[RMDB]
RNA sequence: GGGAACGACUCGAGUAGAGUCGAAAAGGUCGAUGUCGUGACGUGACGCGUGCUGUGAGUCGUAUAGCGCAAGACUGUCGUCGUCUGUCGUGUGCUGGGCUAUCGGUUGCGGACGGGCGUAGAGUCCAAAGACGACGAAGUUCGCUUCGUCGUCUUUAAAAGAAACAACAACAACAAC
Reactivity to DMS in 0.01 (KOAc 150mM, MgCl2 10mM, bicine 150mM(pH8.5), 24C), signal-to-noise 2, nucleotides 027 to 126: g010g020u010c040g000a080u020g010u010c010g010u010g000a110c050g030u020g000a100c090g010c110g020u000g020c060u020g000u000g010a040g010u000c050g030u000a080u000a090g020c020g030c060a070a110g020a040c030u000g000u000c070g000u000c080g010u000c030u000g000u000c020g000u000g010u010g010c020u000g010g010g020c050u010a100u010c060g010g000u000u010g030c030g000g000a080c090g030g000g000c020g000u020a070g000a160g010u000c040c100
Reactivity to 2A3 in 0.01 (KOAc 150mM, MgCl2 10mM, bicine 150mM(pH8.5), 24C), signal-to-noise 1, nucleotides 027 to 126: g050g000u020c020g040a050u120g020u040c070g050u040g020a110c030g060u030g010a010c030g040c040g000u080g040c040u090g040u070g080a010g050u050c040g010u090a060u110a140g030c020g010c010a030a000g050a040c010u060g030u070c010g060u040c030g020u010c060u060g040u060c000g050u070g000u020g100c040u100g040g010g000c050u060a090u100c030g060g010u030u040g070c000g060g000a010c030g060g000g020c010g000u040a070g030a000g080u020c040c000